[RMDB]
RNA sequence: GGGAACGACUCGAGUAGAGUCGAAAAAGCCACCGCUACGGCGGUGGCAAGUAGAAAAGUUGGUGCUGAGACCACGCCCUCUACCGUAAUAAUAGAUAAAUAGGCGAGUAUCAGUACGCUGAUACAAAAAACACUCACACGUUCGCGUGUGAGUGAAGUGCAAUGAGAAGUUCGCUUCUCAUUGCACAAAAGAAACAACAACAACAAC
Reactivity to 2A3 in 0.01 (KOAc 150mM, MgCl2 10mM, bicine 150mM(pH8.5), 24C), signal-to-noise 1, nucleotides 027 to 156: a000g000c000c000a000c000c000g100c040u070a070c270g130g000c030g020g000u030g010g000c000a000a030g020u020a000g010a050a050a020a000g030u090u030g010g010u110g050c180u100g000a020g000a030c010c010a100c010g030c020c000c000u010c000u000a040c030c000g080u070a070a070u070a270a010u060a100g130a060u080a040a170a050u150a060g060g090c040g020a030g000u010a010u000c000a000g050u060a010c160g000c070u020g000a010u000a120c050a010a180a000a000a000a000c000a000c000u000c000a000c000a000c000g000u010u050c140g020c000g190u010g000u000g000a000g000u000g000a000a000